An RNA of 177 nucleotides, treated with DMS and 2A3 and read out base by base.
RNA sequence: GGGAACGACUCGAGUAGAGUCGAAAACAGGUACCACUAGCGAGACCAUGGAUCAUGAUCUCGGAUCCUGCUAGGCUGAUCACGUACUACGAUCACAUCUCAUGUAGUACGUACCGAUCAGUACCGCCCGUCGAACUCGAUUCGUCGAGUUCGACGGAAAAGAAACAACAACAACAAC
Reactivity to DMS in 0.01 (KOAc 150mM, MgCl2 10mM, bicine 150mM(pH8.5), 24C), signal-to-noise 1, nucleotides 027 to 126: c220a060g000g000u000a010c180c150a070c090u000a060g000c000g040a060g000a000c020c000a020u030g000g030a300u010c010a070u020g030a010u000c000u000c100g020g010a140u000c020c000u000g040c000u000a030g030g010c070u020g000a000u000c030a080c000g010u010a010c000u000a010c010g000a080u070c280a120c200a240u060c180u000c170a140u010g000u000a010g020u000a000c000g010u010a040c300c110g000a020u000c000a000g020u020a030c030c060g000c040
Reactivity to 2A3 in 0.01 (KOAc 150mM, MgCl2 10mM, bicine 150mM(pH8.5), 24C), signal-to-noise 2, nucleotides 027 to 126: c050a010g060g010u080a120c040c040a020c160u030a010g070c010g070a020g010a060c030c040a070u100g020g050a150u210c030a090u090g110a090u080c060u010c010g030g000a090u060c000c020u010g000c030u020a020g010g070c010u000g000a000u000c010a000c020g000u000a000c000u010a020c040g080a090u150c100a050c060a300u150c120u060c120a140u300g000u010a000g000u010a000c030g000u000a040c040c100g000a000u000c000a000g000u000a090c000c030g000c000

Conditions: 150 mM KOAc, 10 mM MgCl2 and 150 mM bicine (pH 8.5), 24 C. The 2A3 profile rests on 1,906 reads. Reactivities are rounded to 0.1 and cut off at 0 and 3.